[RMDB]
RNA sequence: GGGAACGACUCGAGUAGAGUCGAAAAGUAGUAGCCGCCGAUGUCCACCGGUUCGCCUUGUACCUCGGUGAGCUCUCGCACGAUGACGUCUUCGUUUUUGGUCAACACAUCUGCCAGCGAGGCGAAGCGAACCAGUCCAGUUCGCUGGACUGGUUCGAAAAGAAACAACAACAACAAC
Reactivity to 2A3 in 0.01 (KOAc 150mM, MgCl2 10mM, bicine 150mM(pH8.5), 24C), signal-to-noise 4, nucleotides 027 to 126: g140u190a010g030u070a000g010c000c000g000c020c020g010a020u030g020u010c050c010a030c040c080g050g000u030u040c120g090c010c000u010u020g020u040a030c000c010u000c000g000g030u030g040a060g000c000u010c000u010c020g050c020a060c110g150a140u230g060a040c020g020u030c040u190u080c070g110u040u060u040u120u120g080g010u170c070a120a030c070a020c030a260u080c110u160g020c010c000a010g020c010g030a010g000g000c000g010a030a000g050
Reactivity to DMS in 0.01 (KOAc 150mM, MgCl2 10mM, bicine 150mM(pH8.5), 24C), signal-to-noise 3, nucleotides 027 to 126: g010u080a000g000u020a030g000c000c020g050c020c010g020a070u000g000u000c070c040a040c140c280g010g000u010u020c090g040c000c000u030u010g050u000a080c020c030u000c030g000g050u000g000a070g010c030u010c000u000c010g000c080a140c150g010a110u000g000a100c080g020u010c040u030u000c010g000u000u020u010u020u000g040g040u010c140a050a090c210a080c180a140u040c150u000g020c020c000a040g000c060g000a050g010g000c010g020a090a060g020

Structure probing data (2A3 and DMS) for a 177-nucleotide construct. The 2A3 profile rests on 6,111 reads. The data come from the RNA Mapping Database (RMDB), library OK1LIB. The RNA was probed in 150 mM KOAc, 10 mM MgCl2 and 150 mM bicine (pH 8.5) at 24 C. High 2A3 reactivity points to a flexible backbone, as in loops and unpaired stretches. 2A3 adducts were read by reverse transcription with SuperScript II with manganese.